[RMDB]
RNA sequence: GGGAACGACUCGAGUAGAGUCGAAAAGAAUAUAAGAGCGCAGUAAUUGUGAGAGCAAACUGCGCCCGGACUGUAGGAUCCGGUGGCACAGCAACGCUCAGUCACAAAACGCUGUGCCACGUGAAGAGGUAGCUGAGGAUUUCGAUCCUCAGCUACCAAAAGAAACAACAACAACAAC
Reactivity to 2A3 in 0.01 (KOAc 150mM, MgCl2 10mM, bicine 150mM(pH8.5), 24C), signal-to-noise 1, nucleotides 027 to 126: g000a010a050u250a040u130a050a060g020a020g000c000g010c000a000g030u030a120a060u000u000g030u060g040a080g000a000g160c000a000a000a050c000u000g000c000g000c000c000c020g000g000a000c080u120g030u130a070g110g190a090u000c000c000g040g000u000g000g000c000a000c000a000g000c020a090a150c120g050c070u170c110a040g010u000c060a000c050a150a010a020a000c070g000c000u000g000u000g000c000c000a000c030g010u050g070a020a240g040a030
Chemical mapping of a 177-nucleotide RNA with 2A3. For 2A3, 574 sequencing reads were counted. For 2A3 the reverse transcriptase was SuperScript II with manganese. The reactions ran in a buffer of 150 mM KOAc, 10 mM MgCl2 and 150 mM bicine (pH 8.5), at 24 C. Source: RMDB library OK1LIB, as collected in RNAgym.